[RMDB]
RNA sequence: GGGAACGACUCGAGUAGAGUCGAAAAGAUCAAUUAUGAUUGCAAAGUAAUAUGUCAAGGCAGACAUAUCUAGCUGUCGCCUUAGCUAGAGAUAGCCGAAUUAUUGCUUUCAUAAGAACGGCAAGAAGCUAAUUAGUAGCUUCGGCUACUAAUUAGCAAAAGAAACAACAACAACAAC
Reactivity to 2A3 in 0.01 (KOAc 150mM, MgCl2 10mM, bicine 150mM(pH8.5), 24C), signal-to-noise 3, nucleotides 027 to 126: g020a130u140c050a010a080u060u030a020u060g020a010u000u060g010c020a000a020a090g040u090a030a100u060a050u170g130u110c060a060a040g070g000c040a050g020a090c030a050u160a050u040c030u010a000g040c000u010g090u140c050g130c040c040u020u050a010g000c000u010a000g000a010g000a070u090a030g020c020c000g020a000a010u110u040a020u040u040g010c000u000u020u000c000a000u000a040a010g050a090a020c040g080g000c040a040a060g090a110a030
Reactivity to DMS in 0.01 (KOAc 150mM, MgCl2 10mM, bicine 150mM(pH8.5), 24C), signal-to-noise 4, nucleotides 027 to 126: g000a100u000c080a090a180u000u000a020u000g000a030u010u000g000c040a030a030a080g020u010a050a040u010a050u000g010u010c170a080a100g010g020c040a120g000a060c100a050u000a070u010c040u010a060g010c110u000g000u010c080g000c130c070u000u000a020g010c020u000a000g010a040g000a100u000a040g010c010c040g010a080a050u000u000a060u000u000g000c010u000u000u000c000a020u000a010a020g010a070a110c150g010g000c110a070a070g010a110a090
The record gives the reactivity of an RNA of 177 nucleotides to 2A3 and DMS. DMS adducts were read by reverse transcription with MarathonRT. It was measured as part of the RMDB library OK2TRN. High DMS reactivity at an A or C suggests that its Watson-Crick edge is free.